Source: RMDB libraries RFM100 and RFMREP, as collected in RNAgym. This 177-nucleotide RNA was probed chemically with 2A3 and DMS. Values cover nucleotides 27 to 126.
[RMDB]
RNA sequence: GGGAACGACUCGAGUAGAGUCGAAAAUCUGGGGAGUGGGACAGAAAUGAUAUUUUCGCAAAAUUUAUUUCGCCGUCCCACCCCAACUUGCAUUGUCUGUAGAAAUUGGGAAUCCAAUUUCUCUUUGGUAUAGUAACAAGUUCGCUUGUUACUAUACAAAAGAAACAACAACAACAAC
Reactivity to 2A3 in 0.01 (KOAc 150mM, MgCl2 10mM, bicine 150mM(pH8.5), 24C), signal-to-noise 7, nucleotides 027 to 126: u060c040u040g010g010g010g020a230g070u030g000g000g010a000c010a020g010a010a050a000u020g040a020u030a090u180u050u050u110c110g060c160a040a080a030a000u020u030u040a030u010u020u010c060g050c140c080g020u000c000c000c000a000c010c000c000c000a000a030c020u020u100g020c050a110u020u080g030u080c170u070g050u070a020g010a010a010a010u010u000g020g010g090a220a140u120c000c000a010a000u010u010u000c010u000c000u030u010u010g040
Reactivity to DMS in 0.01 (KOAc 150mM, MgCl2 10mM, bicine 150mM(pH8.5), 24C), signal-to-noise 6, nucleotides 027 to 126: u010c050u010g010g020g010g010a120g040u000g000g000g010a010c010a180g000a010a010a020u000g000a010u020a020u000u000u000u010c300g010c300a110a030a010a060u000u000u000a010u000u010u000c010g000c280c170g000u000c000c000c000a020c000c000c010c000a030a010c140u010u000g000c140a140u010u000g010u010c130u000g020u000a060g010a000a000a000u000u000g000g000g010a160a120u020c000c000a000a010u000u000u000c000u000c020u000u010u000g010